[RMDB]
RNA sequence: GGGAACGACUCGAGUAGAGUCGAAAACAGGUGAUGCAGCAGGCACCCUACGCGCUGAGCCUGCCCGAAUCCGAGAUGCACGAGACCGUCCGCGAAAUCGGCGUCGACUUGAUGUUCACCCACAUCACGCCUCACCAUCAUUCGUGAUGGUGAGGCGAAAAGAAACAACAACAACAAC
Reactivity to 2A3 in 0.01 (KOAc 150mM, MgCl2 10mM, bicine 150mM(pH8.5), 24C), signal-to-noise 2, nucleotides 027 to 126: c050a020g000g090u060g050a060u070g030c090a050g000c040a030g100g010c030a060c010c010c030u060a010c040g020c000g030c000u030g010a010g030c000c000u020g000c000c000c000g100a020a030u090c070c070g000a020g010a130u000g030c050a070c090g040a050g030a000c000c000g020u040c000c040g050c070g030a120a050a040u020c050g030g020c010g170u030c000g010a070c020u050u070g000a010u040g050u030u100c040a090c010c050c000a030c000a010u150c020a000
Chemical mapping of a 177-nucleotide RNA with 2A3. Conditions: 150 mM KOAc, 10 mM MgCl2 and 150 mM bicine (pH 8.5), 24 C. Values cover nucleotides 27 to 126. For 2A3 the reverse transcriptase was SuperScript II with manganese. Source: RMDB library OK1LIB, as collected in RNAgym.